The record gives the reactivity of an RNA of 177 nucleotides to 2A3 and DMS. For 2A3 the reverse transcriptase was SuperScript II with manganese. The data come from the RNA Mapping Database (RMDB), library OK2TST. Conditions: 150 mM KOAc, 10 mM MgCl2 and 150 mM bicine (pH 8.5), 24 C.
RNA sequence: GGGAACGACUCGAGUAGAGUCGAAAAAGAAACGCUUGCUCUUCGGCGGUCAGGCGCGGCUGCGGAUAGUUAUGCAGCUUUUUCCAGUCCGGCUUGCCCUGGAACAAGUCGCCCUCCCACCAGGUGGUAAAUGAAUGCCAUUCGUGGCAUUCAUUUAAAAAGAAACAACAACAACAAC
Reactivity to 2A3 in 0.01 (KOAc 150mM, MgCl2 10mM, bicine 150mM(pH8.5), 24C), signal-to-noise 1, nucleotides 027 to 126: a000g100a010a060a000c010g010c010u000u020g000c000u000c000u040u020c000g020g010c040g000g020u020c010a040g020g000c060g000c030g050g010c000u000g000c020g000g110a170u100a110g180u190u080a060u280g020c040a010g000c000u060u030u010u040u030c020c010a000g040u020c000c020g000g000c010u040u300g000c000c030c020u000g000g020a020a060c000a010a000g020u050c020g020c000c000c000u000c020c010c000a020c020c040a040g080g080u130g010g090
Reactivity to DMS in 0.01 (KOAc 150mM, MgCl2 10mM, bicine 150mM(pH8.5), 24C), signal-to-noise 4, nucleotides 027 to 126: a100g010a100a090a110c110g020c020u010u000g000c030u000c010u000u010c300g040g020c010g000g000u010c020a060g040g010c020g010c220g010g000c000u010g020c000g020g000a160u020a110g010u010u020a100u000g010c010a020g000c010u000u010u000u000u010c150c140a120g000u010c020c020g000g000c020u000u010g040c020c000c040u010g010g010a030a040c020a010a000g000u010c050g020c030c010c030u000c010c000c010a140c100c070a110g000g000u010g010g010